[RMDB]
RNA sequence: GGGAACGACUCGAGUAGAGUCGAAAAGCUCUGGAAUUGAGGCCCCUCUAUCAAUAAUCCAAAACUACUUCGCAGAGUAAUCUGCCGAAUCGUAGGAUGCCCAUUACUAUCUAUUUUUGGAGCAUCUAAAACUGUCAGUGCUUCGGCACUGACAGAACUAUAUGUACCCGUUCGCGGGUACAUAUAGAAAAGAAACAACAACAACAAC
Reactivity to DMS in 0.01 (KOAc 150mM, MgCl2 10mM, bicine 150mM(pH8.5), 24C), signal-to-noise 2, nucleotides 027 to 156: g040c030u000c010u010g040g010a080a110u010u010g000a060g020g000c040c030c030c000u000c030u000a300u000c040a070a120u000a110a120u010c080c030a040a080a150a180c010u000a040c050u000u000c050g000c020a000g020a070g000u000a090a120u010c010u000g020c070c010g000a040a030u000c140g040u010a140g020g000a070u000g000c000c000c000a070u000u000a070c120u000a140u000c170u000a270u000u000u000u000u000g030g010a080g010c000a010u000c020u000a050a040a100a190c010u000g000u000c000a000g050u000g010c010u010u000c300g060g040c010a010c000u010g010a000c000a010g010a000a160
Reactivity to 2A3 in 0.01 (KOAc 150mM, MgCl2 10mM, bicine 150mM(pH8.5), 24C), signal-to-noise 3, nucleotides 027 to 156: g000c010u000c030u040g030g080a130a060u140u050g020a030g040g030c010c000c020c000u060c030u080a160u050c030a090a120u120a050a080u100c040c050a030a060a010a060c010u030a010c010u020u020c030g000c000a000g010a010g050u090a080a110u010c000u000g050c070c050g020a000a010u080c050g020u020a030g050g030a000u000g010c020c000c000a030u040u060a050c050u050a100u190c040u080a230u130u080u010u000u020g000g020a100g020c000a000u010c010u050a010a030a020a120c000u010g010u000c000a000g000u000g000c000u000u130c130g050g020c000a000c000u000g000a000c000a000g000a000a000